[RMDB]
RNA sequence: GGGAACGACUCGAGUAGAGUCGAAAAGAUUAUGUGGGAGAGGCGCCCUUUCGUUUCCUCGGAUAAUUAAUUGCCAGUCGCUGGCUUUAGCGAUCUUGAUGUCAUCUGUAGCGAUGACUAUGCUACCUUAAGGUAUGAUCCGGAUACCACCGGUAAACAUCCAGGUAAAUUUCGAUUUACCUGGAUGAAAAGAAACAACAACAACAAC
Reactivity to DMS in 0.01 (KOAc 150mM, MgCl2 10mM, bicine 150mM(pH8.5), 24C), signal-to-noise 2, nucleotides 027 to 156: g010a130u000u000a030u000g010u000g000g000g000a120g000a060g020g020c020g030c070c050c050u010u010u010c030g020u010u000u000c010c000u010c020g020g000a080u000a040a100u000u000a070a130u000u000g010c030c010a110g020u000c030g020c010u010g020g000c120u000u000u010a050g020c040g010a040u000c060u000u000g060a200u000g010u000c000a020u010c010u010g010u000a160g020c090g020a050u000g010a030c020u000a060u010g000c040u000a050c030c030u010u000a040a070g030g010u000a040u010g010a080u000c030c020g010g000a180u000a100c040c040a120c020c030g000g000u000a070a130a150
Reactivity to 2A3 in 0.01 (KOAc 150mM, MgCl2 10mM, bicine 150mM(pH8.5), 24C), signal-to-noise 3, nucleotides 027 to 156: g020a010u080u080a040u120g200u070g040g030g020a160g010a030g050g020c010g030c050c020c020u010u060u070c020g000u000u020u000c010c000u000c000g000g010a010u020a090a020u150u080a020a100u150u150g020c020c020a040g040u070c020g010c080u020g030g040c080u120u090u090a000g000c000g010a020u030c040u040u130g060a070u110g010u020c000a020u000c060u070g210u220a010g070c030g060a010u010g010a010c000u000a050u140g050c010u020a040c010c010u070u180a100a050g020g010u050a040u080g050a040u030c000c000g000g010a020u070a060c000c030a010c000c010g000g010u010a010a000a010

An RNA of 207 nucleotides, treated with DMS and 2A3 and read out base by base.